[RMDB]
Source: RMDB library RNAMAK, as collected in RNAgym. Chemical mapping of a 207-nucleotide RNA with 2A3.
RNA sequence: GGGAACGACUCGAGUAGAGUCGAAAAGCGUACUACAAGACGCAGUAGCUCAACAGCUAUAUAUUGGGAUAUCCCAAAUAGGAUAUCCAGGUAUAGACAUGAGCUAUCAGGUCUUGUAUCGCAAAGUUGUCGCAUUCGUUCGCGAAUGCGACAACAACAAAUCUACCGCGUUCGCGCGGUAGAUUUGAAAAGAAACAACAACAACAAC
Reactivity to 2A3 in 0.01 (KOAc 150mM, MgCl2 10mM, bicine 150mM(pH8.5), 24C), signal-to-noise 1, nucleotides 027 to 156: g000c000g010u060a080c040u000a010c010a000a020g000a000c000g000c120a000g010u000a000g000c000u000c000a050a200c050a200g070c030u000a000u010a000u010a030u010u210g250g010g020a020u010a000u000c040c040c020a160a300a260u300a040g000g000a000u000a000u000c010c020a000g000g030u000a000u000a000g050a060c040a110u040g000a000g050c000u000a000u090c030a010g010g020u000c000u000u000g000u000a000u170c000g000c000a180a060a000g010u000u010g010u000c000g000c020a000u000u000c000g040u030u050c190g030c030g120a010a000u000g000c020g050a000c000a000a000c000a000a000